[RMDB]
RNA sequence: GGGAACGACUCGAGUAGAGUCGAAAACAAAAUAAUUUUUCGCCGCUGAGGCAUGCGCGUGCGCUCUGUCAGCAUGCCGAGCAGCGGGCGGAACGCACGCUCCUUCCCAACUCUACUCGAGAAAAAACAGAUAAUAUUUCUUCGGAAAUAUUAUCUGAAAAGAAACAACAACAACAAC
Reactivity to 2A3 in 0.01 (KOAc 150mM, MgCl2 10mM, bicine 150mM(pH8.5), 24C), signal-to-noise 1, nucleotides 027 to 126: c020a000a150a050a180u290a110a100u070u120u050u080u130c070g000c070c000g050c150u110g110a060g030g000c040a000u080g040c020g000c030g040u010g000c040g030c030u050c050u070g030u010c010a000g000c070a110u090g010c020c120g050a080g000c010a000g000c000g010g000g000c020g020g010a020a020c000g000c000a010c010g010c020u040c030c020u020u020c000c000c000a020a020c000u010c000u000a000c000u000c000g000a010g000a110a030a000a000a010a000
Reactivity to DMS in 0.01 (KOAc 150mM, MgCl2 10mM, bicine 150mM(pH8.5), 24C), signal-to-noise 1, nucleotides 027 to 126: c120a050a040a140a070u030a040a140u010u000u000u020u000c040g020c130c000g020c150u010g010a190g000g040c040a030u000g010c060g030c070g080u000g020c020g010c070u010c030u030g020u020c010a150g020c000a040u000g020c040c180g020a090g010c030a020g010c000g000g010g010c050g010g010a000a030c140g000c020a000c010g010c000u000c030c050u000u000c010c010c010a100a040c000u000c000u000a010c000u000c000g000a010g020a000a070a050a030a070a120
This 177-nucleotide RNA was probed chemically with 2A3 and DMS. 2A3 adducts were read by reverse transcription with SuperScript II with manganese. It was measured as part of the RMDB library M2PK90. The 2A3 profile rests on 1,392 reads. The reactions ran in a buffer of 150 mM KOAc, 10 mM MgCl2 and 150 mM bicine (pH 8.5), at 24 C.